[RMDB]
RNA sequence: GGGAACGACUCGAGUAGAGUCGAAAAGAACAGGUGCCUGGAUUAGGUGUGGCCUAAGCUUUGGGAAGUUUUUCACGUUUUCAAGUAGAUUUCCUGGGUUCCUGUUUGAGAACCACUGCUUUUGUAACAGAUUAUAGACUUUCGAGUCUAUAAUCUGAAAAGAAACAACAACAACAAC
Reactivity to 2A3 in 0.01 (KOAc 150mM, MgCl2 10mM, bicine 150mM(pH8.5), 24C), signal-to-noise 5, nucleotides 027 to 126: g010a010a000c010a000g000g020u010g030c010c010u080g070g030a100u020u030a010g030g020u140g140u180g270g070c010c010u020a020a000g000c020u150u170u170g010g010g010a010a030g020u020u030u010u150u280c080a040c050g040u080u050u140u200c050a080a040g000u010a020g030a120u030u050u030c020c020u050g030g000g000u020u020c010c000u010g000u010u030u040g030a030g010a020a020c010c020a030c090u090g080c030u120u090u090u200g090u110a120a040
Reactivity to DMS in 0.01 (KOAc 150mM, MgCl2 10mM, bicine 150mM(pH8.5), 24C), signal-to-noise 6, nucleotides 027 to 126: g000a030a030c020a010g010g000u000g010c000c010u000g010g010a080u000u000a020g010g010u000g030u010g030g020c010c010u000a040a050g000c040u000u010u010g010g000g000a030a040g010u000u010u010u020u000c170a050c110g000u000u010u010u010c190a080a120g010u000a050g000a070u000u000u000c010c000u010g020g000g010u000u000c000c010u000g010u000u000u000g000a120g000a160a160c010c010a090c220u010g000c070u000u000u000u000g010u000a100a240
This 177-nucleotide RNA was probed chemically with 2A3 and DMS. The DMS profile rests on 11,280 reads. 2A3 adducts were read by reverse transcription with SuperScript II with manganese. The RNA was probed in 150 mM KOAc, 10 mM MgCl2 and 150 mM bicine (pH 8.5) at 24 C. For DMS the reverse transcriptase was MarathonRT. It was measured as part of the RMDB library OK2TST.